Source information:
Chemical mapping of a 177-nucleotide RNA with 2A3 and DMS. For 2A3, 5,696 sequencing reads were counted. Source: RMDB library TTRDES, as collected in RNAgym.
RNA sequence: GGGAACGACUCGAGUAGAGUCGAAAAGAUGACUUCGGUCAUCAAAGAUAUGGAGUGCGAAGGUGUCCUUUCGGAAACGAAAGUGACACUUUCGACACUCCUAAGUCAAAAGUGCUGUUCGCAGCACCAUGCAUCGAUGGUUCGCCAUCGAUGCAUGAAAAGAAACAACAACAACAAC
Reactivity to 2A3 in 0.01 (KOAc 150mM, MgCl2 10mM, bicine 150mM(pH8.5), 24C), signal-to-noise 2, nucleotides 027 to 126: g000a000u000g010a000c020u000u150c300g180g010u000c000a000u020c000a020a110a040g070a000u090a040u140g020g000a020g000u030g000c000g000a000a010g070g000u010g010u040c000c000u000u000u000c010g040g000a080a060a040c000g000a000a000a000g060u100g020a000c000a000c000u000u000u000c000g000a000c010a000c000u000c000c000u000a010a000g060u010c050a070a050a130a080g000u030g000c000u020g080u160u170c300g000c200a010g000c020a000c100
Reactivity to DMS in 0.01 (KOAc 150mM, MgCl2 10mM, bicine 150mM(pH8.5), 24C), signal-to-noise 4, nucleotides 027 to 126: g000a010u000g000a010c000u000u030c260g020g000u000c000a000u000c000a060a110a120g000a070u000a300u000g010g000a010g020u010g000c020g010a020a000g000g020u000g000u000c000c000u000u000u000c000g010g000a100a100a230c030g000a010a010a000g020u020g020a000c000a000c000u000u000u000c000g010a130c000a010c000u000c000c000u000a010a090g000u000c030a140a080a110a120g010u000g010c000u000g000u010u000c300g020c020a020g000c020a010c010

Description: The reactions ran in a buffer of 150 mM KOAc, 10 mM MgCl2 and 150 mM bicine (pH 8.5), at 24 C.